Source information
Source: RMDB library OK3TST, as collected in RNAgym. Structure probing data (DMS and 2A3) for a 207-nucleotide construct. 2A3 adducts were read by reverse transcription with SuperScript II with manganese. Reactivities are given for positions 27 through 156.
RNA sequence: GGGAACGACUCGAGUAGAGUCGAAAAACAGGGCAUCCCUGAAGCAAAGUUAAGCCUAGUGCCUCAUGGUGCAAAAGUGGGCACAAGGUGGCAGCCACAGUGGUCCCCUAACUCACCAUAGAACGCCAUCCAAGGAACAACUUGGACCAAUUUAAAACUGCUGAUAUAAUUUCGAUUAUAUCAGCAGAAAAGAAACAACAACAACAAC
Reactivity to DMS in 0.01 (KOAc 150mM, MgCl2 10mM, bicine 150mM(pH8.5), 24C), signal-to-noise 3, nucleotides 027 to 156: a090c060a040g000g020g030c050a040u010c010c020c010u000g020a130a160g020c020a080a100a170g010u000u000a070a160g000c000c000u000a150g030u000g010c030c030u000c060a050u000g020g050u010g010c190a050a040a120a180g010u000g010g030g000c020a070c020a080a040g040g020u000g030g010c090a210g020c030c030a120c050a070g000u010g020g000u010c020c000c000c010u010a050a080c050u010c040a100c020c040a090u000a090g020a070a100c030g000c080c060a080u000c010c020a030a030g000g000a140a160c120a080a120c030u000u000g010g020a050c040c040a060a070u000u000u000a070a130a160a200
Reactivity to 2A3 in 0.01 (KOAc 150mM, MgCl2 10mM, bicine 150mM(pH8.5), 24C), signal-to-noise 6, nucleotides 027 to 156: a000c030a020g010g010g020c020a030u050c010c020c000u020g060a110a010g030c060a170a070a040g060u150u190a060a010g000c000c000u030a040g000u020g020c010c010u160c060a050u110g090g000u230g060c020a050a040a070a060g050u100g010g000g000c000a000c010a010a020g030g010u010g040g000c020a010g050c020c020a050c020a020g040u040g030g040u060c000c000c010c000u010a030a030c020u030c070a090c020c010a060u050a110g090a090a020c080g040c080c020a050u030c010c010a040a000g060g060a150a200c080a070a050c060u000u010g000g010a010c000c030a130a140u220u300u250a110a180a050a050